[RMDB]
Background
Source: RMDB library OK2TST, as collected in RNAgym. This 177-nucleotide RNA was probed chemically with 2A3 and DMS. For 2A3 the reverse transcriptase was SuperScript II with manganese. For DMS the reverse transcriptase was MarathonRT. The RNA was probed in 150 mM KOAc, 10 mM MgCl2 and 150 mM bicine (pH 8.5) at 24 C. Reactivities are given for positions 27 through 126.

RNA sequence: GGGAACGACUCGAGUAGAGUCGAAAACUGAAGCUGCUCAUCAGCCUGUAUCUCAUGGGCGACGACGGCGACCAGGUGCUGGACACGACCGCGCACGUCUUCAAGGAACAGGACAUUGCACUGGAGCAACGCCGUAAGGCUUCGGCCUUACGGCGUUAAAAGAAACAACAACAACAAC
Reactivity to 2A3 in 0.01 (KOAc 150mM, MgCl2 10mM, bicine 150mM(pH8.5), 24C), signal-to-noise 2, nucleotides 027 to 126: c040u050g030a060a020g050c060u070g000c020u030c050a210u040c040a100g060c000c000u030g000u040a300u060c070u000c050a100u170g000g000g000c020g010a030c020g000a050c010g030g000c030g000a010c000c010a040g200g060u200g240c070u020g000g000a050c060a020c230g220a220c030c010g000c030g000c050a080c080g030u000c000u070u120c060a080a070g000g000a040a000c010a010g030g070a000c030a030u100u220g000c030a040c070u070g070g020a030g030c030
Reactivity to DMS in 0.01 (KOAc 150mM, MgCl2 10mM, bicine 150mM(pH8.5), 24C), signal-to-noise 2, nucleotides 027 to 126: c010u010g020a060a100g010c090u000g020c050u010c040a140u020c080a090g000c000c020u020g000u000a120u000c040u000c100a220u000g020g000g000c000g000a200c050g010a050c010g000g020c020g000a080c040c010a020g030g030u010g000c020u000g000g010a150c220a080c060g000a150c020c000g020c000g030c030a160c020g000u010c000u000u020c180a060a060g020g000a000a030c030a010g010g010a080c130a110u020u010g010c180a170c070u000g000g000a020g020c040